[RMDB]
RNA sequence: GGGAACGACUCGAGUAGAGUCGAAAAGUCUAGAGGUUCGCCUCUAGACAAAGAACGCUAAUUCGCUAAGCGAGGCCGCGAGAGCGGCGAUACGCGAAGAAAAAAGAGCCCUGUUCGCAGGGCUCAAGUCCAUAAGACUGUUCGCAGUCUUAUGGACAAAAGAAACAACAACAACAAC
Reactivity to DMS in 0.01 (KOAc 150mM, MgCl2 10mM, bicine 150mM(pH8.5), 24C), signal-to-noise 2, nucleotides 027 to 126: g010u010c000u000a000g010a060g020g020u000u000c300g000c010c000u000c000u020a010g010a000c000a040a100a070g010a120a180c040g000c090u000a120a180u010u000c030g000c010u000a100a110g010c020g010a130g020g030c010c020g030c000g010a160g000a220g060c000g020g000c010g010a010u000a000c290g000c000g000a020a020g010a010a070a080a060a060a110g000a020g000c000c000c000u000g010u000u020c180g020c010a000g000g000g020c000u010c010a000a020
Reactivity to 2A3 in 0.01 (KOAc 150mM, MgCl2 10mM, bicine 150mM(pH8.5), 24C), signal-to-noise 1, nucleotides 027 to 126: g000u000c000u000a010g010a020g080g010u040u060c170g060c070c000u010c000u030a010g000a000c000a010a000a000g020a110a000c020g030c080u100a090a110u040u040c010g000c030u010a000a050g020c020g050a030g220g000c010c010g000c000g030a050g000a030g150c010g040g000c030g010a020u040a030c060g000c010g010a010a010g060a040a140a000a020a010a010g010a010g000c000c020c000u000g010u000u040c200g000c020a000g000g000g000c000u000c000a000a010